[RMDB]
RNA sequence: GGGAACGACUCGAGUAGAGUCGAAAAAUAAAGUAGUCUCCUGCAGCGUCUCAGGUUUCCGUUGCAGUCCUCGGAACCAGGACCUCGGCGUGGCCUAGCGAGUUAUGGCGACGAAGGCCGUGAAAAACAUCAUGUUCUUGUUCGCAAGAACAUGAUGAAAAGAAACAACAACAACAAC
Reactivity to DMS in 0.01 (KOAc 150mM, MgCl2 10mM, bicine 150mM(pH8.5), 24C), signal-to-noise 3, nucleotides 027 to 126: a070u010a060a040a110g000u000a080g000u000c020u000c010c010u000g020c120a060g020c100g010u000c030u000c100a080g000g010u010u010u010c100c010g010u000u000g010c070a080g010u010c050c020u010c070g020g010a040a070c080c050a120g000g030a050c050c020u000c050g000g010c070g030u000g000g020c010c010u010a110g000c040g000a110g000u000u010a070u010g020g010c020g010a090c050g010a110a090g010g010c010c020g020u000g000a050a070a060a080a110
Reactivity to 2A3 in 0.01 (KOAc 150mM, MgCl2 10mM, bicine 150mM(pH8.5), 24C), signal-to-noise 2, nucleotides 027 to 126: a000u270a040a090a000g140u140a020g040u000c020u030c040c010u030g010c050a040g030c030g100u030c020u010c090a070g090g000u030u100u020c020c000g000u040u030g030c070a040g080u080c000c000u010c020g070g020a080a060c040c010a010g000g050a010c000c000u020c020g020g000c010g050u050g050g000c000c000u000a010g050c010g030a020g020u110u110a100u190g040g010c000g030a050c020g020a060a010g050g000c000c020g020u100g050a080a090a000a000a010